This 207-nucleotide RNA was probed chemically with 2A3 and DMS. DMS adducts were read by reverse transcription with MarathonRT. For DMS, 3,313 sequencing reads were counted. For 2A3 the reverse transcriptase was SuperScript II with manganese.

RNA sequence: GGGAACGACUCGAGUAGAGUCGAAAACACUCAGGCUCAGGAAUGGCAUCUAGUAAGCUCAGGGAUGUAUUGGAUAGCUUUCAAAGGGAUGUACCUGGUGGAUGUACAUUGACCGAACAAACAGCCACCAUAGCCUGGACCAGGUACAAUCUUGAACUACGGAAUGAUAGUUCGCUAUCAUUCCGUAAAAAGAAACAACAACAACAAC
Reactivity to 2A3 in 0.01 (KOAc 150mM, MgCl2 10mM, bicine 150mM(pH8.5), 24C), signal-to-noise 4, nucleotides 027 to 156: c080a010c040u100c010a020g010g000c010u050c090a030g030g070a200a140u060g030g000c010a030u030c050u070a090g070u150a080a050g030c040u050c110a040g030g000g040a040u050g020u070a060u050u080g070g040a080u110a070g080c040u060u090u190c130a150a150a070g070g010g010a010u020g000u000a000c010c000u000g020g020u070g020g040a070u110g000u040a020c010a060u000u070g110a090c040c060g030a090a020c020a040a100a030c030a000g030c010c000a010c020c010a070u060a020g000c000c020u010g000g020a000c000c010a000g010g000u000a020c030a010a130u000c000u000u040g010a040a000c030
Reactivity to DMS in 0.01 (KOAc 150mM, MgCl2 10mM, bicine 150mM(pH8.5), 24C), signal-to-noise 2, nucleotides 027 to 156: c060a100c070u010c020a080g010g000c020u000c090a090g000g000a090a130u000g020g030c060a170u040c040u010a140g040u010a170a070g030c060u000c050a100g010g000g000a080u000g020u000a020u020u000g010g020a110u000a190g000c030u000u030u010c040a100a020a300g010g000g000a110u000g010u000a020c000c000u000g020g060u010g000g010a140u000g000u010a040c070a110u010u000g010a190c030c050g000a070a120c060a100a050a160c080a100g020c010c010a040c020c020a140u000a070g020c030c010u030g000g010a060c000c010a010g000g030u000a010c020a040a090u000c000u000u000g010a060a030c040

Annotation
The 2A3 profile rests on 2,857 reads.